[RMDB]
RNA sequence: GGGAACGACUCGAGUAGAGUCGAAAACGUCGUGAACUAGCGACAAUGCUUUAGCUCCAUCGUUAUCUAACCGAAACAUCGUGACUAGUCGUAGAAUAGAACCAGGAGAGGGCGCUGGCAAACAAAGACGGGGAGUCUGAUUCGUCGGACUCCCCGUAAAAGAAACAACAACAACAAC
Reactivity to DMS in 0.01 (KOAc 150mM, MgCl2 10mM, bicine 150mM(pH8.5), 24C), signal-to-noise 3, nucleotides 027 to 126: c140g000u030c010g010u010g000a090a110c080u010a110g000c000g000a030c040a110a120u030g000c040u000u020u010a040g000c060u000c010c050a060u010c050g000u000u010a060u000c030u020a070a140c060c040g000a060a100a080c090a100u010c060g010u020g010a070c040u010a050g000u010c070g020u010a060g000a050a080u010a040g000a030a070c020c000a020g020g000a090g030a120g010g030g000c050g030c050u010g000g010c060a060a060a070c150a030a040a060g000
Reactivity to 2A3 in 0.01 (KOAc 150mM, MgCl2 10mM, bicine 150mM(pH8.5), 24C), signal-to-noise 4, nucleotides 027 to 126: c040g020u040c020g000u020g070a140a040c080u070a080g020c010g080a010c020a010a040u100g010c010u000u010u090a030g040c000u000c010c000a080u040c040g000u000u060a070u070c030u060a040a060c040c000g050a090a020a060c070a080u180c070g030u040g030a040c040u020a030g070u060c040g020u050a040g050a100a060u100a090g050a040a020c030c040a030g020g090a130g030a050g030g020g000c000g000c020u030g020g000c050a020a000a050c040a030a080a000g140